[RMDB]
RNA sequence: GGGAACGACUCGAGUAGAGUCGAAAAGUGCCUCGUCGGCCCGGCAUGCCAAUCUGAUCCGAAGUUCAAGGUGGUUUCUCUGGCCUUCCAGAGAGAUGCGCGUCGGAAGAACCGACGAACAAACCUUAAAACAAAACGACGUUCGCGUCGUUUUGAAGUAACAUACCAACUUCGGUUGGUAUGUUACAAAAGAAACAACAACAACAAC
Reactivity to DMS in 0.01 (KOAc 150mM, MgCl2 10mM, bicine 150mM(pH8.5), 24C), signal-to-noise 2, nucleotides 027 to 156: g000u000g000c090c050u010c020g010u000c020g060g010c040c010c060g040g000c030a100u000g050c060c060a030a070u000c030u000g000a090u000c050c050g020a080a100g030u000u000c050a080a210g010g010u000g010g030u010u000u000c000u010c010u000g020g000c150c220u000u020c010c010a010g000a050g010a040g030a040u010g040c030g050c030g030u030c020g000g000a110a100g030a170a110c010c010g020a030c000g040a030a040c000a080a080a080c040c010u010u000a080a070a120a240c010a000a000a010a030c000g020a020c000g010u000u010c300g020c040g030u000c010g030u000u000u000u000g000a040a170
Reactivity to 2A3 in 0.01 (KOAc 150mM, MgCl2 10mM, bicine 150mM(pH8.5), 24C), signal-to-noise 4, nucleotides 027 to 156: g040u030g080c020c010u010c020g010u010c000g020g020c000c020c000g000g000c020a030u090g030c010c010a110a100u040c040u050g020a060u040c010c020g060a090a030g070u110u100c060a070a030g050g020u030g020g040u020u100u000c010u000c000u010g030g000c040c030u210u140c020c000a000g010a000g000a000g000a020u080g060c060g000c030g030u000c000g000g020a080a080g010a080a060c000c010g000a000c010g020a030a020c040a010a080a050c030c030u160u240a070a160a010a050c010a000a010a000a000c000g000a020c010g000u050u080c250g000c010g100u010c000g000u010u000u000u000g000a020a000